[RMDB]
RNA sequence: GGGAACGACUCGAGUAGAGUCGAAAACGGUCGACAGUGGAACUGUAUUUUCCGAGAUUUCUGCCCUGGGUUCAACCCCUGCGGUCGGACGUGUUACGCUUUAAGCCUCUUUCGGGAGGUUGCUACACGCUCAGUCUAACAAUCGAGUCGACGUGCCGGAUAAGCUCAAGUUCGCUUGAGCUUAUCCAAAAGAAACAACAACAACAAC
Reactivity to DMS in 0.01 (KOAc 150mM, MgCl2 10mM, bicine 150mM(pH8.5), 24C), signal-to-noise 1, nucleotides 027 to 156: c040g010g000u000c020g000a050c030a070g000u000g010g000a060a170c150u020g070u000a100u000u000u000u000c030c000g020a210g000a140u000u000u000c060u000g010c000c000c000u000g000g040g080u000u010c150a100a160c090c010c000c000u000g020c130g010g000u010c020g050g000a050c000g000u000g000u000u000a020c140g000c240u010u000u020a140a110g000c010c000u000c000u000u000u000c200g010g000g010a040g030g020u000u000g020c060u000a060c060a000c000g040c040u010c050a210g000u000c050u000a050a090c070a050a090u000c070g010a050g000u000c000g000a040c040g040u000g000c040c080
Reactivity to 2A3 in 0.01 (KOAc 150mM, MgCl2 10mM, bicine 150mM(pH8.5), 24C), signal-to-noise 3, nucleotides 027 to 156: c010g070g060u010c010g010a000c000a090g050u110g010g080a040a070c010u070g000u190a130u050u190u060u030c030c030g020a040g000a090u070u080u120c050u070g030c000c010c010u020g000g000g020u150u280c090a120a180c070c000c000c000u020g020c040g030g060u110c060g000g000a010c020g000u000g040u100u110a070c110g010c000u150u060u210a090a030g000c000c000u010c030u000u060u080c050g100g000g000a010g000g000u030u070g000c000u010a010c000a010c000g040c040u060c020a010g030u040c070u030a130a080c030a050a100u150c030g020a020g010u010c000g000a010c020g020u030g080c060c040

An RNA of 207 nucleotides, treated with DMS and 2A3 and read out base by base. The RNA was probed in 150 mM KOAc, 10 mM MgCl2 and 150 mM bicine (pH 8.5) at 24 C. For 2A3, 1,235 sequencing reads were counted. Source: RMDB library ARCHII, as collected in RNAgym. The DMS profile rests on 2,199 reads. For DMS the reverse transcriptase was MarathonRT.